[RMDB]
RNA sequence: GGGAACGACUCGAGUAGAGUCGAAAAGUCACGAGGAGACUCGUGACAGCAUGCUUCGGCAUGCAAGGGUCGGCAUGGCAUCUCCACCUCCUCGCGGUCCGACCUGGGCAUCCGAAGGAGGACGCACGUCCACUCGGAUGCACAAUGGAGAGCCAAACAUCCUAAUGACGUUCGCGUCAUUAGGAUGAAAAGAAACAACAACAACAAC
Reactivity to DMS in 0.01 (KOAc 150mM, MgCl2 10mM, bicine 150mM(pH8.5), 24C), signal-to-noise 1, nucleotides 027 to 156: g050u010c010a030c010g040a010g020g000a300g020a250c000u000c010g060u000g000a020c010a090g000c000a000u000g000c020u000u010c300g030g000c020a030u000g030c000a000a050g000g030g010u000c020g030g000c160a100u010g040g040c040a190u000c010u020c000c000a140c050c050u000c020c000u010c050g020c140g030g000u020c020c000g040a050c050c000u030g000g000g050c000a050u000c000c000g020a080a120g000g010a230g050g030a040c010g000c140a110c090g010u000c030c000a060c020u010c020g010g010a010u010g000c010a020c030a040a030u000g000g000a070g020a300g020c000c010a120a140a230
Reactivity to 2A3 in 0.01 (KOAc 150mM, MgCl2 10mM, bicine 150mM(pH8.5), 24C), signal-to-noise 5, nucleotides 027 to 156: g000u000c000a000c010g000a000g000g030a050g030a070c000u000c000g000u000g000a000c000a000g000c000a000u000g000c010u070u060c170g140g000c000a000u000g010c030a050a190g020g000g000u000c010g000g020c120a170u100g010g000c020a160u030c000u000c000c010a020c010c000u050c010c020u080c060g080c080g040g000u000c000c000g000a000c000c000u030g000g020g000c000a000u010c000c010g050a090a050g040g050a200g010g010a020c020g090c120a120c210g010u000c000c000a010c010u000c000g000g000a000u000g000c000a000c000a010a000u010g000g000a010g000a000g000c000c000a010a010a000